Chemical mapping of a 177-nucleotide RNA with DMS and 2A3. The 2A3 profile rests on 1,370 reads.
RNA sequence: GGGAACGACUCGAGUAGAGUCGAAAACAAGAAGGUAUAUGCGCCACGACCACUAACCACACUGACGGUACUGGUUGAUAACGUGGCCAUCACAGACUACCGUCAAGCUGAGAGGUUCAGUAAACUGGCCCUAGCGAUAUUUCGAUAUCGCUAGGGCAAAAGAAACAACAACAACAAC
Reactivity to DMS in 0.01 (KOAc 150mM, MgCl2 10mM, bicine 150mM(pH8.5), 24C), signal-to-noise 1, nucleotides 027 to 126: c000a140a300g000a220a010g010g040u000a040u030a030u010g000c100g000c000c000a040c000g010a210c240c090a050c070u060a050a010c000c000a100c060a090c000u000g000a000c090g030g000u030a040c120u020g010g000u000u080g000a110u000a010a170c090g000u000g020g010c030c040a100u000c040a080c020a060g000a070c170u000a000c030c000g010u000c050a090a090g030c060u050g000a210g000a000g040g030u010u000c060a000g000u000a030a010a030c110u000g000
Reactivity to 2A3 in 0.01 (KOAc 150mM, MgCl2 10mM, bicine 150mM(pH8.5), 24C), signal-to-noise 2, nucleotides 027 to 126: c080a050a030g140a000a050g180g010u130a160u030a020u120g090c120g010c000c030a000c050g070a080c000c060a030c120u110a100a010c010c010a070c020a030c120u090g020a030c000g000g000u000a010c090u020g120g050u080u050g070a090u010a170a000c080g000u010g040g020c010c000a020u080c010a020c000a000g090a010c140u010a010c030c000g000u020c040a070a010g050c070u040g060a040g020a020g150g040u090u030c070a010g000u200a110a100a060c060u080g020